[RMDB]
RNA sequence: GGGAACGACUCGAGUAGAGUCGAAAAGCAACCUUCGGGUUGCAAAAAGAUAUGGACCGGAGUUCGCGGUCGGAAACGACCGAACUACGAGUCCCGGUCCUAAGUCAAAAACCGAGUUCGCUCGGAAGAAUUCGGUAUAGUUCGCUAUACCGAAUUCAAAAGAAACAACAACAACAAC
Reactivity to DMS in 0.01 (KOAc 150mM, MgCl2 10mM, bicine 150mM(pH8.5), 24C), signal-to-noise 2, nucleotides 027 to 126: g000c030a010a010c010c010u010u040c210g040g000g020u000u010g030c000a010a070a110a090a050g010a030u010a300u010g000g010a030c000c000g010g010a090g010u000u000c020g030c010g030g000u020c010g050g000a100a130a060c030g010a020c000c010g000a080a040c120u020a240c030g010a010g000u000c010c000c000g000g020u000c000c000u000a010a100g000u020c040a090a060a070a080a090c030c000g010a010g000u000u020c200g050c030u000c000g020g010a090a060
Reactivity to 2A3 in 0.01 (KOAc 150mM, MgCl2 10mM, bicine 150mM(pH8.5), 24C), signal-to-noise 1, nucleotides 027 to 126: g020c000a000a000c010c000u080u110c300g140g020g050u000u000g000c000a090a000a000a000a000g030a040u060a030u090g000g010a000c000c030g000g000a100g020u020u040c020g010c000g050g030u000c020g000g000a110a140a020c010g020a000c000c000g050a050a010c070u140a050c080g000a030g120u100c000c060c000g000g000u010c000c020u030a170a030g050u000c070a020a040a050a100a220c020c010g000a000g010u110u100c240g010c070u020c020g050g020a000a070
Source information:
The record gives the reactivity of an RNA of 177 nucleotides to DMS and 2A3. The DMS profile rests on 1,269 reads. The 2A3 profile rests on 2,268 reads. The data come from the RNA Mapping Database (RMDB), library TTRDEL. Values cover nucleotides 27 to 126. DMS adducts were read by reverse transcription with MarathonRT.